[RMDB]
RNA sequence: GGGAACGACUCGAGUAGAGUCGAAAAAUAGCAUUUAAAUUUAGUCCUAAAUUUGUUCAAACUAAAUUAACAGCAGUUCUUAUAACGAUUGGUAGAACUGGUAGAGUGAACUAUACUGCUAAAUUAAGCUCCAUCAUUAGUUCGCUAAUGAUGGAGCAAAAGAAACAACAACAACAAC
Reactivity to 2A3 in 0.01 (KOAc 150mM, MgCl2 10mM, bicine 150mM(pH8.5), 24C), signal-to-noise 1, nucleotides 027 to 126: a000u060a000g000c000a040u070u110u130a110a100a120u110u110u110a110g020u000c060c000u030a000a080a110u170u180u120g040u040u040c000a000a030a020c000u110a000a070a200u200u260a230a000c020a040g040c000a000g040u020u010c000u010u170a230u000a210a210c170g230a300u190u130g230g050u060a020g020a000a000c000u000g040g040u060a020g020a000g120u000g000a000a000c000u030a000u040a060c020u040g000c020u040a000a000a150u070u070a060a060
The data come from the RNA Mapping Database (RMDB), library OK2TST.
Structure probing data (2A3) for a 177-nucleotide construct.